Chemical mapping of a 177-nucleotide RNA with DMS. DMS adducts were read by reverse transcription with MarathonRT. The DMS profile rests on 2,214 reads. The reactions ran in a buffer of 150 mM KOAc, 10 mM MgCl2 and 150 mM bicine (pH 8.5), at 24 C.
[RMDB]
RNA sequence: GGGAACGACUCGAGUAGAGUCGAAAAGAUAUGGAGUCCGGAAGAAGACGCACUGGAGGGCAAGGAAUCGGAAACGAUUCCUUGCCUACCCACCCAGUGAACUACGUUGUAAACGGACUCCUAAGUCCAUCUAUUCCCUCUUCGGAGGGAAUAGAUGAAAAGAAACAACAACAACAAC
Reactivity to DMS in 0.01 (KOAc 150mM, MgCl2 10mM, bicine 150mM(pH8.5), 24C), signal-to-noise 5, nucleotides 027 to 126: g000a020u000a080u030g000g000a020g030u000c000c000g040g000a000a130g030a300a300g000a000c020g000c010a000c000u000g000g020a140g040g000g010c020a010a010g000g020a010a010u000c000g000g010a010a020a040c010g000a010u000u010c000c000u000u000g010c010c000u010a000c150c170c240a300c220c000c000a000g010u000g000a050a030c120u010a300c020g010u000u000g020u000a020a110a300c040g000g000a000c000u000c000c000u000a000a080g000u000c020